Record summary: The data come from the RNA Mapping Database (RMDB), library OK1LIB. This 177-nucleotide RNA was probed chemically with 2A3.

RNA sequence: GGGAACGACUCGAGUAGAGUCGAAAACCAGCCGAAGCCAAGCAUAGGCGGAACGCCGCUCGACAAUCUCAAGAUGGGCAAUCUGGACGAAGUUCUGGAUGCAGCUGAGCGCGAUUUUGGUUGAGCUACGGACUAAUGACUUCGGUCAUUAGUCCGUAAAAGAAACAACAACAACAAC
Reactivity to 2A3 in 0.01 (KOAc 150mM, MgCl2 10mM, bicine 150mM(pH8.5), 24C), signal-to-noise 2, nucleotides 027 to 126: c000c000a000g070c000c010g000a090a010g000c040c010a060a040g030c030a120u130a160g030g000c000g000g040a040a000c030g090c120c060g010c000u000c010g040a070c020a030a110u060c010u020c040a080a180g030a100u120g000g100g000c070a020a230u020c000u030g010g010a010c040g290a250a090g030u110u000c000u000g020g000a010u010g030c050a050g000c000u060g060a080g060c050g000c040g060a020u000u040u050u130g140g000u040u040g020a000g000c010u010

Background:
The RNA was probed in 150 mM KOAc, 10 mM MgCl2 and 150 mM bicine (pH 8.5) at 24 C. For 2A3 the reverse transcriptase was SuperScript II with manganese.